[RMDB]
RNA sequence: GGGAACGACUCGAGUAGAGUCGAAAAUCAGACUAUCCAGCCCGAGGUAAAAGAAGUUGCACCUGUCUAUGAGGCUGAUACCGAACAGACACAGAAUGUUACUGUUAAACCUAAGAGGUUACGCAAAUCAGGGAUCCGUUCGCGGAUCCCAAAAGAAACAACAACAACAAC
Reactivity to DMS in 0.01 (KOAc 150mM, MgCl2 10mM, bicine 150mM(pH8.5), 24C), signal-to-noise 3, nucleotides 027 to 129: u070c160a020g050a000c060u090a130u030c050c030a140g000c000c040c000g020a030g030g050u000a030a090a050a040g030a070a020g020u000u000g000c100a110c010c020u010g040u020c000u070a080u000g020a190g030g090c030u030g040a090u010a000c020c020g040a170a100c050a020g010a120c110a110c190a100g000a170a160u080g000u000u000a070c070u020g040u000u050a110a090a000c060c050u000a100a090g040a150g020g020u040u100a030c150g000c110a060a030a210u030c050a160
Reactivity to 2A3 in 0.01 (KOAc 150mM, MgCl2 10mM, bicine 150mM(pH8.5), 24C), signal-to-noise 2, nucleotides 027 to 129: u140c010a010g080a040c010u030a000u140c040c000a000g040c000c000c000g030a020g040g060u040a050a050a130a000g140a020a000g020u040u080g000c000a000c030c030u080g000u000c020u000a100u090g090a010g000g000c000u050g050a000u050a080c000c000g010a000a000c000a080g060a030c000a000c000a070g080a040a000u060g020u010u120a030c050u060g000u000u070a010a000a030c000c000u000a010a020g170a030g000g000u030u040a030c020g000c080a030a070a020u150c080a150
Description: Conditions: 150 mM KOAc, 10 mM MgCl2 and 150 mM bicine (pH 8.5), 24 C. Chemical mapping of a 170-nucleotide RNA with DMS and 2A3. The 2A3 profile rests on 2,722 reads. It was measured as part of the RMDB library 15KLIB. Reactivities are given for positions 27 through 129. High DMS reactivity at an A or C suggests that its Watson-Crick edge is free. High 2A3 reactivity points to a flexible backbone, as in loops and unpaired stretches.